[RMDB]
Chemical mapping of a 177-nucleotide RNA with 2A3 and DMS. DMS adducts were read by reverse transcription with MarathonRT. 2A3 adducts were read by reverse transcription with SuperScript II with manganese. Conditions: 150 mM KOAc, 10 mM MgCl2 and 150 mM bicine (pH 8.5), 24 C. The data come from the RNA Mapping Database (RMDB), library RFM100.

RNA sequence: GGGAACGACUCGAGUAGAGUCGAAAAAGGGAGGCGCGCCAACGCGUGCAGCAGUCGCACCAGAAACCAAGAGCCUCUGUGCUUAUGCCAGGAGGAGGGCCUUGCCCGACUGAGAGUGCUCGCUGAACUUCCUCAAGGCAUUCGUGCCUUGAGGAAGAAAAGAAACAACAACAACAAC
Reactivity to 2A3 in 0.01 (KOAc 150mM, MgCl2 10mM, bicine 150mM(pH8.5), 24C), signal-to-noise 3, nucleotides 027 to 126: a000g030g010g010a020g010g030c000g000c000g030c100c030a100a070c110g000c040g040u040g030c020a020g000c000a000g060u100c000g000c010a000c010c020a030g080a040a030a040c050c010a060a000g020a030g020c000c020u020c050u080g100u190g010c010u120u230a140u300g000c040c000a010g030g020a040g080g000a040g000g000g020c020c030u090u220g000c000c010c000g000a040c000u030g030a020g000a010g110u130g030c000u000c010g040c010u020g010a060a050
Reactivity to DMS in 0.01 (KOAc 150mM, MgCl2 10mM, bicine 150mM(pH8.5), 24C), signal-to-noise 2, nucleotides 027 to 126: a240g000g000g000a110g000g000c050g000c000g000c040c020a110a010c300g000c100g080u000g000c060a040g000c080a090g000u000c150g030c030a030c010c020a110g000a060a190a130c060c040a100a120g000a070g010c040c000u000c000u000g000u070g030c030u000u060a070u030g020c000c050a060g000g020a080g030g000a150g000g010g030c040c210u030u030g000c030c000c010g000a150c010u000g020a040g030a030g000u040g010c000u000c020g000c060u020g030a090a210